[RMDB]
RNA sequence: GGGAACGACUCGAGUAGAGUCGAAAAGAAAAUGUCACAUCCCAGUGGAGAUGUUGAGGCUUGUAUGGUUCAGGUUACCUGCGGUAGCAUGACUCUUAAUGGUCUUUGGCUUGACAACACAGUCUGGAAAGGUGGUUCUUCGGAACCACCAAAAGAAACAACAACAACAAC
Reactivity to 2A3 in 0.01 (KOAc 150mM, MgCl2 10mM, bicine 150mM(pH8.5), 24C), signal-to-noise 2, nucleotides 027 to 129: g070a020a100a000a020u060g080u050c000a000c110a120u010c080c000c000a030g090u040g050g060a060g010a020u070g030u300u190g000a040g000g000c010u030u010g030u140a120u130g030g020u020u190c080a000g000g080u080u020a000c000c000u000g010c000g090g050u020a000g000c000a040u070g000a040c000u010c000u010u050a010a060u250g010g000u000c000u080u050u050g000g020c000u010u060g010a020c000a010a010c000a030c020a000g090u000c100u050g070g050a080a090a080
Reactivity to DMS in 0.01 (KOAc 150mM, MgCl2 10mM, bicine 150mM(pH8.5), 24C), signal-to-noise 2, nucleotides 027 to 129: g000a060a100a040a070u040g000u010c040a090c030a030u030c000c000c000a100g030u050g000g060a180g040a100u000g020u040u000g020a000g030g040c020u020u020g010u000a070u020g080g000u060u020c050a050g010g010u000u040a070c020c030u000g030c180g000g040u020a140g040c060a030u020g000a060c070u060c040u010u060a120a090u040g010g020u010c050u000u040u030g000g000c130u000u030g000a000c190a100a000c020a000c060a060g000u000c020u030g040g000a010a050a140
Conditions: 150 mM KOAc, 10 mM MgCl2 and 150 mM bicine (pH 8.5), 24 C. Structure probing data (2A3 and DMS) for a 170-nucleotide construct. Reactivities are given for positions 27 through 129. The DMS profile rests on 8,909 reads. The 2A3 profile rests on 2,154 reads. DMS adducts were read by reverse transcription with MarathonRT.